[RMDB]
RNA sequence: GGGAACGACUCGAGUAGAGUCGAAAACGUGAAACUUCGCCGUCGGGCGAAGGGAAGCGAAGGUUCGACUGGAAGCCGAAAGGCGGAAAGUCGAGUUGUUGAAAAAUGACCUGAGAGCAAAAGGCGACUGUAACAGUGAGUUCGCUCACUGUUACAGAAAAGAAACAACAACAACAAC
Reactivity to DMS in 0.01 (KOAc 150mM, MgCl2 10mM, bicine 150mM(pH8.5), 24C), signal-to-noise 2, nucleotides 027 to 126: c000g040u030g020a060a260a250c000u000u000c000g000c000c000g000u020c270g020g000g020c000g060a020a030g000g000g000a300a290g000c020g000a090a100g030g020u000u010c010g010a000c000u000g000g030a300a210g020c010c020g000a080a100a150g000g080c000g000g020a300a030a000g000u000c000g010a020g010u000u000g010u000u070g000a020a060a030a040a120u030g010a140c070c000u000g020a120g020a140g000c180a080a090a060a020g000g000c070g020a140
Reactivity to 2A3 in 0.01 (KOAc 150mM, MgCl2 10mM, bicine 150mM(pH8.5), 24C), signal-to-noise 2, nucleotides 027 to 126: c050g020u070g040a000a020a000c000u020u000c000g000c000c020g290u300c300g230g030g000c000g000a000a000g010g000g010a000a000g050c050g020a130a000g090g040u030u000c000g000a000c030u010g010g010a000a030g000c000c000g050a070a050a020g020g000c060g000g000a020a020a020g000u000c000g000a000g000u030u000g000u000u010g030a110a030a000a000a010u110g090a100c000c000u020g050a040g020a000g100c120a040a080a030a010g020g020c000g000a020